[RMDB]
RNA sequence: GGGAACGACUCGAGUAGAGUCGAAAAGUGAAAGUAAUCUUAAUUACAAGUAGCAUGAUGUACCACUCUAAAGAGCACAGUAUCAAAACAUGAAAGAACAAAGUUGGAUCCUGGUCCUGGAUUUGCUUCUUGCUUUCUUUGUGGAAAUGGACAGGUCCACAUACUGCGCAUUCGUGCGCAGUAUGUGAAAAGAAACAACAACAACAAC
Reactivity to 2A3 in 0.01 (KOAc 150mM, MgCl2 10mM, bicine 150mM(pH8.5), 24C), signal-to-noise 2, nucleotides 027 to 156: g000u020g020a030a000a000g010u010a000a030u070c130u180u150a190a070u090u020a020c000a010a000g000u010a000g010c050a040u140g030a040u100g110u080a030c060c030a040c040u010c040u110a100a090a040g050a010g030c040a020c030a080g070u080a070u230c070a100a080a040a030c040a100u100g070a160a050a010g050a050a020c020a070a070a060g020u090u050g070g040a010u040c020c030u050g030g010u040c000c030u020g010g020a000u000u000u050g050c000u010u080c010u070u100g060c010u000u060u040c020u020u130u080g030u050g050g030a020a070a140u060g010g000a000c020a060g020g000u000c020
Reactivity to DMS in 0.01 (KOAc 150mM, MgCl2 10mM, bicine 150mM(pH8.5), 24C), signal-to-noise 1, nucleotides 027 to 156: g040u000g010a090a220a260g000u000a030a010u010c160u010u020a070a060u000u000a020c020a070a100g020u010a120g020c000a150u000g010a110u010g020u000a130c040c030a160c020u020c010u000a070a080a120g020a020g010c000a050c030a090g010u010a130u000c030a050a110a130a070c030a030u000g030a050a060a030g010a050a080c110a060a010a130g010u010u000g020g000a030u000c000c030u000g040g040u010c000c030u000g030g000a070u000u010u020g010c030u000u030c040u000u000g050c040u000u000u000c030u000u010u020g000u000g030g030a070a010a050u000g010g020a120c070a050g020g020u010c020